RNA sequence: GGGAACGACUCGAGUAGAGUCGAAAACUGUAAAACUACUACUGGUAUACCUGAAUACAACUUUAUCAUCUACGACUCAUCAGAUCGUGGCCAGGAAAGUUUAGCUAGGUCUGCAUGUGUUUAUUAUGGUUAAAUUGAUGUUCGCAUCAAUUUAACCAAAAGAAACAACAACAACAAC
Reactivity to 2A3 in 0.01 (KOAc 150mM, MgCl2 10mM, bicine 150mM(pH8.5), 24C), signal-to-noise 2, nucleotides 027 to 126: c000u020g040u110a000a010a040a110c070u070a040c010u010a030c030u100g010g040u020a010u000a070c000c000u000g060a040a000u060a030c080a050a050c010u080u050u080a090u080c010a030u040c010u060a070c040g010a010c020u030c050a060u040c020a040g000a030u060c040g090u080g000g000c040c030a100g110g020a060a040a010g060u120u140u070a010g000c000u010a010g020g010u000c030u020g030c050a030u100g000u000g040u060u000u070a110u100u030a060u040
Reactivity to DMS in 0.01 (KOAc 150mM, MgCl2 10mM, bicine 150mM(pH8.5), 24C), signal-to-noise 1, nucleotides 027 to 126: c030u010g000u000a050a040a060a080c070u030a070c070u030a070c080u000g020g000u000a050u000a090c050c040u030g010a030a030u000a050c180a040a090c060u000u010u020a070u010c100a090u030c010u020a140c130g010a050c030u000c100a070u020c140a060g010a060u010c020g020u010g000g000c090c170a120g010g010a040a000a070g000u000u000u000a090g010c030u000a080g000g030u000c020u000g020c090a060u010g010u000g000u000u000u000a030u030u000a090u010